[RMDB]
RNA sequence: GGGAACGACUCGAGUAGAGUCGAAAAGUCUCCUAGAGAGCUUGGCCGUCGGGCCUUACACCCCGACUUGCUGAGUUUCUCUAGGAGAGUCCCUUUCCCAGCCAGAGGUGGUUGGUCAAACAAUACCAAAACUCUUGCUAGUUCGCUAGCAAGAGAACAGUCUGGUUAAGUUCGCUUAACCAGACUGAAAAGAAACAACAACAACAAC
Reactivity to 2A3 in 0.01 (KOAc 150mM, MgCl2 10mM, bicine 150mM(pH8.5), 24C), signal-to-noise 2, nucleotides 027 to 156: g030u000c000u000c000c000u000a000g000a000g000a010g000c010u020u010g000g010c000c010g000u000c030g000g050g010c030c000u050u080a090c100a050c010c010c000c020g000a000c030u090u250g010c000u000g010a020g010u020u300u000c000u000c000u000a000g010g010a000g000a000g000u000c000c000c010u020u070u030c010c000c010a000g000c000c010a010g040a050g060g080u030g020g000u020u020g020g120u170c030a020a070a070c050a070a090u050a120c010c030a040a060a070a110c000u000c000u010u000g010c000u000a010g030u070u010c200g040c130u000a000g010c000a000a000g000a000g000a020a010
This 207-nucleotide RNA was probed chemically with 2A3. The reactions ran in a buffer of 150 mM KOAc, 10 mM MgCl2 and 150 mM bicine (pH 8.5), at 24 C. It was measured as part of the RMDB library M2RFPK.